The data come from the RNA Mapping Database (RMDB), library 15KLIB. The record gives the reactivity of an RNA of 170 nucleotides to 2A3 and DMS. Values cover nucleotides 27 to 129. 2A3 is a SHAPE reagent: it acylates the 2'-hydroxyl of flexible nucleotides of all four kinds. The RNA was probed in 150 mM KOAc, 10 mM MgCl2 and 150 mM bicine (pH 8.5) at 24 C.
RNA sequence: GGGAACGACUCGAGUAGAGUCGAAAAUAACAGAUUUAAUGUUGCAAUCACUCGUGCCCAAAAAGGUAUUCUUUGUGUUAUGACAUCUCAGGCACUCUUUGAGUCCUUAGAGUUUACUGAAUUGUCUGAAGAUCGCUCUUCGGAGCGAUCAAAAGAAACAACAACAACAAC
Reactivity to 2A3 in 0.01 (KOAc 150mM, MgCl2 10mM, bicine 150mM(pH8.5), 24C), signal-to-noise 2, nucleotides 027 to 129: u020a040a010c040a050g020a040u060u080u120a080a170u060g010u000u010g070c080a080a090u130c000a010c160u110c050g000u050g050c000c000c000a020a040a000a000a000g260g070u170a130u090u000c000u000u080u100g090u000g060u080u070a090u050g140a070c060a150u040c020u010c150a000g000g040c090a000c030u010c030u040u050u180g120a100g020u060c020c000u010u000a000g020a000g000u000u000u050a070c000u000g000a090a100u040u080g140u000c020u000g000a000a000
Reactivity to DMS in 0.01 (KOAc 150mM, MgCl2 10mM, bicine 150mM(pH8.5), 24C), signal-to-noise 1, nucleotides 027 to 129: u020a000a110c110a040g010a110u010u030u080a000a170u000g010u000u000g020c090a110a090u000c000a160c020u010c000g020u010g020c040c020c040a030a020a090a110a050g080g030u010a030u030u020c000u010u040u000g060u020g030u020u010a160u000g020a070c040a030u000c120u050c040a030g050g020c300a090c020u040c070u110u000u000g020a000g050u020c190c030u000u030a020g020a000g030u010u020u060a170c090u050g000a000a070u000u020g000u000c000u060g080a050a040